[RMDB]
RNA sequence: GGGAACGACUCGAGUAGAGUCGAAAAGAUAUGGACAAUCAUAUGGACGAAGAACAGCAUCGGAAACGAUGCUGGGAGUCUAAAUAUGAGUUGUCCUAAGUCAAAUGUGGAGAGUUCGCUCUCCACAGAGUUCAUAUAGCUUCGGCUAUAUGAACUCAAAAGAAACAACAACAACAAC
Reactivity to 2A3 in 0.01 (KOAc 150mM, MgCl2 10mM, bicine 150mM(pH8.5), 24C), signal-to-noise 4, nucleotides 027 to 126: g000a020u070a030u170g000g010a010c010a010a040u020c010a000u020a010u080g130g010a040c080g220a300a140g010a070a020c000a010g000c000a000u000c000g020g000a060a020a030c000g000a000u000g020c000u000g000g010g010a030g050u000c010u060a180a180a010u040a010u030g090a080g300u050u020g010u030c000c000u010a070a010g030u010c060a030a150a230u170g000u000g020g020a010g000a010g000u090u260c300g050c140u020c000u000c010c010a010c000a000
Reactivity to DMS in 0.01 (KOAc 150mM, MgCl2 10mM, bicine 150mM(pH8.5), 24C), signal-to-noise 3, nucleotides 027 to 126: g000a030u020a300u010g000g000a000c000a020a040u000c000a020u000a010u000g000g020a130c130g010a080a140g030a270a160c000a000g000c020a010u010c020g010g000a130a070a230c010g020a010u000g020c000u000g000g000g000a180g000u000c000u000a100a100a030u000a000u010g000a030g020u010u000g000u000c000c000u010a020a110g000u010c040a070a120a200u010g050u010g000g010a050g010a040g030u000u010c300g000c010u000c010u000c000c000a000c000a010
Source: RMDB library TTRDES, as collected in RNAgym. This 177-nucleotide RNA was probed chemically with 2A3 and DMS. 2A3 adducts were read by reverse transcription with SuperScript II with manganese. Values cover nucleotides 27 to 126.